[RMDB]
RNA sequence: GGGAACGACUCGAGUAGAGUCGAAAAAGAAGUGAGAACUUCUCGCCUUGCGACUUAGGUUGUCUGGCCCAACAUGUCAAGAUUCCAUCUAGGAAGAUUAUAUGUGCGGGCUUGAUUUAUCAAGUCCUGUUAUAGAUUUAUUCGUAAAUCUAUAACAAAAAGAAACAACAACAACAAC
Reactivity to DMS in 0.01 (KOAc 150mM, MgCl2 10mM, bicine 150mM(pH8.5), 24C), signal-to-noise 7, nucleotides 027 to 126: a020g000a010a020g020u000g010a240g010a190a040c010u000u000c000u000c090g000c010c010u000u030g020c150g010a020c010u000u000a080g010g010u000u000g000u000c010u000g000g000c000c000c010a150a030c010a010u000g010u000c120a020a020g000a270u000u000c000c010a170u020c230u020a170g000g000a010a010g000a180u000u000a020u010a010u000g010u000g010c220g010g000g000c000u000u000g000a010u000u010u000a010u000c010a040a010g000u000c000c080
Reactivity to 2A3 in 0.01 (KOAc 150mM, MgCl2 10mM, bicine 150mM(pH8.5), 24C), signal-to-noise 9, nucleotides 027 to 126: a000g020a000a000g010u050g030a100g020a100a030c000u010u000c010u010c020g080c010c000u040u130g070c080g010a010c010u030u050a110g020g000u010u010g010u000c010u020g010g000c000c010c000a000a010c000a010u030g020u070c110a020a010g010a070u010u000c010c010a080u090c200u220a100g010g000a000a010g000a010u010u040a020u010a000u020g030u020g090c270g000g000g000c000u000u000g000a000u040u090u140a020u010c000a000a000g000u000c000c020